[RMDB]
RNA sequence: GGGAACGACUCGAGUAGAGUCGAAAACAUCAGACCAUCUCUCUCAGGAAGUUUGAACUGAAACUGUGCAGAGAAAACCCGAGGUCAGGAGAGGGGACAGAGUGUAAUGCGAGGUAACAGUGAGCAGUAUGAACGGCAUAUUCGUAUGCCGUUCAUAAAAAGAAACAACAACAACAAC
Reactivity to DMS in 0.01 (KOAc 150mM, MgCl2 10mM, bicine 150mM(pH8.5), 24C), signal-to-noise 3, nucleotides 027 to 126: c140a070u000c080a060g000a070c050c070a170u000c030u000c010u000c000u000c030a060g010g000a120a080g020u000u000u000g020a120a160c060u000g030a110a060a100c030u000g020u010g010c110a030g020a060g020a040a080a090a110c060c030c020g010a100g010g010u000c030a070g000g020a080g010a050g000g000g010g020a070c060a080g000a040g020u000g000u000a050a100u000g000c050g000a060g000g000u000a040a080c070a040g000u000g000a080g010c090a080g000
Reactivity to 2A3 in 0.01 (KOAc 150mM, MgCl2 10mM, bicine 150mM(pH8.5), 24C), signal-to-noise 1, nucleotides 027 to 126: c010a060u130c070a020g050a050c020c020a030u000c000u000c000u010c010u010c040a000g070g020a060a030g070u020u180u300g110a170a050c070u030g040a220a110a060c020u050g000u020g050c090a020g000a010g000a070a040a040a020c000c010c000g040a060g000g010u060c020a000g100g020a070g010a030g000g020g010g010a000c020a030g080a010g030u060g050u100a090a070u130g030c000g000a010g020g030u010a030a050c020a030g030u030g090a040g000c020a020g070

An RNA of 177 nucleotides, treated with DMS and 2A3 and read out base by base. The data come from the RNA Mapping Database (RMDB), library OK2TRN. Conditions: 150 mM KOAc, 10 mM MgCl2 and 150 mM bicine (pH 8.5), 24 C. 2A3 adducts were read by reverse transcription with SuperScript II with manganese.